[RMDB]
RNA sequence: GGGAACGACUCGAGUAGAGUCGAAAACGAGGCCGGGCUGGUGUACAACGCCCUGCUGGAGCGCGUGGGCCGCUACAACAGCACGAACGUGCAGUCCAACCUGGAUCGGCUGGUGACGGACGUGCGCCGGCCUCGUCUUGUUCGCAAGACGAGGCCGAAAAGAAACAACAACAACAAC
Reactivity to 2A3 in 0.01 (KOAc 150mM, MgCl2 10mM, bicine 150mM(pH8.5), 24C), signal-to-noise 1, nucleotides 027 to 126: c030g010a050g030g080c030c030g000g010g000c040u080g000g030u020g000u040a020c030a060a060c050g030c000c020c010u010g000c030u050g100g080a200g020c110g000c010g040u120g010g040g000c000c050g010c010u040a030c020a130a010c020a010g010c070a010c060g060a100a030c010g000u050g020c060a050g030u000c010c000a000a000c000c030u080g140g030a270u100c020g140g050c090u050g010g070u050g030a040c020g000g000a000c020g040u020g010c020g000c000
Reactivity to DMS in 0.01 (KOAc 150mM, MgCl2 10mM, bicine 150mM(pH8.5), 24C), signal-to-noise 1, nucleotides 027 to 126: c030g000a050g000g000c000c020g000g000g050c010u010g000g000u010g010u010a020c080a170a300c250g010c020c010c010u000g010c040u000g000g030a120g000c280g030c020g000u000g000g000g020c020c050g020c160u000a010c020a020a000c050a040g040c020a160c120g000a040a050c060g060u000g000c030a100g000u000c010c050a040a020c050c080u000g030g020a140u010c190g010g020c000u020g010g000u000g000a140c000g020g000a090c000g000u000g000c050g000c010
Chemical mapping of a 177-nucleotide RNA with 2A3 and DMS. Values cover nucleotides 27 to 126. The RNA was probed in 150 mM KOAc, 10 mM MgCl2 and 150 mM bicine (pH 8.5) at 24 C. The data come from the RNA Mapping Database (RMDB), library OK2TST.